RNA sequence: GGGAACGACUCGAGUAGAGUCGAAAAUUGUCAACCAAAUCAGUGACCUGACAUAACCUGUUCCGGGCAGCUUGCCUGUAGCUAAGCAUUUAACUGGUCUCUUACAGGAGAAGCAGGACCCUAGUAGCUAGGGACACAUCUCAAACUGUGACCCAUGGCUGUGAGAAUACUUCGGUAUUCUCACAGCAAAAGAAACAACAACAACAAC
Reactivity to 2A3 in 0.01 (KOAc 150mM, MgCl2 10mM, bicine 150mM(pH8.5), 24C), signal-to-noise 3, nucleotides 027 to 156: u080u020g050u040c010a080a040c020c030a020a020a190u170c030a070g030u040g170a060c030c010u020g020a040c020a090u100a010a060c020c030u040g030u070u010c060c040g000g030g020c050a070g040c030u100u050g030c000c050u040g020u040a010g000c030u050a060a060g000c020a080u070u130u170a090a080c030u060g000g050u030c010u000c010u110u060a020c020a020g010g030a060g050a050a010g010c010a010g010g080a060c000c000c000u060a110g030u070a020g030c060u060a050g010g010g060a010c010a000c000a020u060c040u020c050a070a130a020c090u040g000u020g030a060c030c000c020a060u040g080
Reactivity to DMS in 0.01 (KOAc 150mM, MgCl2 10mM, bicine 150mM(pH8.5), 24C), signal-to-noise 1, nucleotides 027 to 156: u010u020g010u010c060a080a210c070c010a050a170a100u000c120a060g000u000g010a100c030c030u040g000a040c070a060u010a100a180c030c020u020g000u010u020c050c010g050g000g010c070a150g020c060u000u000g070c020c030u000g000u020a070g000c080u000a030a060g050c070a090u020u000u000a170a050c060u010g000g060u000c070u000c060u000u000a140c020a050g020g000a160g040a100a160g010c090a060g050g030a090c050c010c010u000a110g030u000a100g010c040u000a040g040g030g020a150c000a080c050a090u010c220u020c180a110a040a150c020u010g020u010g010a280c000c000c010a050u000g020